[RMDB]
An RNA of 177 nucleotides, treated with DMS and 2A3 and read out base by base. Source: RMDB library OK1LIB, as collected in RNAgym. For DMS, 25,489 sequencing reads were counted. Reactivities are given for positions 27 through 126. The reactions ran in a buffer of 150 mM KOAc, 10 mM MgCl2 and 150 mM bicine (pH 8.5), at 24 C. As a SHAPE reagent, 2A3 marks flexible, mostly unpaired nucleotides at the ribose 2'-OH. 2A3 adducts were read by reverse transcription with SuperScript II with manganese.
RNA sequence: GGGAACGACUCGAGUAGAGUCGAAAAAUGCAAUACAUACAGCUGUCAUUAUGAAGAAAUUACCUGUACUGGUUGCUAUCUGGCUAGCUGCUAUAGCAGAAGUACCAGCUCUUGCAUAUGCAACAGAAUGGUAUGAUAGUUUCGACUAUCAUACCAUAAAAGAAACAACAACAACAAC
Reactivity to DMS in 0.01 (KOAc 150mM, MgCl2 10mM, bicine 150mM(pH8.5), 24C), signal-to-noise 9, nucleotides 027 to 126: a070u010g000c020a040a030u020a100c100a080u020a120c260a040g010c030u010g020u010c080a120u020u010a100u050g010a080a060g010a060a080a080u030u020a080c080c010u000g000u000a030c050u010g000g020u010u010g000c020u020a040u020c160u020g000g010c030u010a120g020c130u030g000c030u010a030u010a040g010c010a030g000a080a030g000u010a030c020c010a010g010c070u000c060u000u010g000c030a030u010a060u010g010c050a070a080c150a070g000a090
Reactivity to 2A3 in 0.01 (KOAc 150mM, MgCl2 10mM, bicine 150mM(pH8.5), 24C), signal-to-noise 9, nucleotides 027 to 126: a000u090g010c020a030a030u060a220c030a030u050a010c010a030g040c120u110g040u060c020a040u020u140a100u290g230a080a120g080a080a070a020u060u030a040c000c010u020g010u030a030c080u020g030g030u050u040g010c010u040a180u160c030u020g140g000c010u020a100g030c050u070g010c030u190a080u120a240g000c000a000g010a050a000g020u040a060c010c000a010g010c020u020c010u040u010g000c020a030u100a070u290g060c040a070a050c010a080g140a220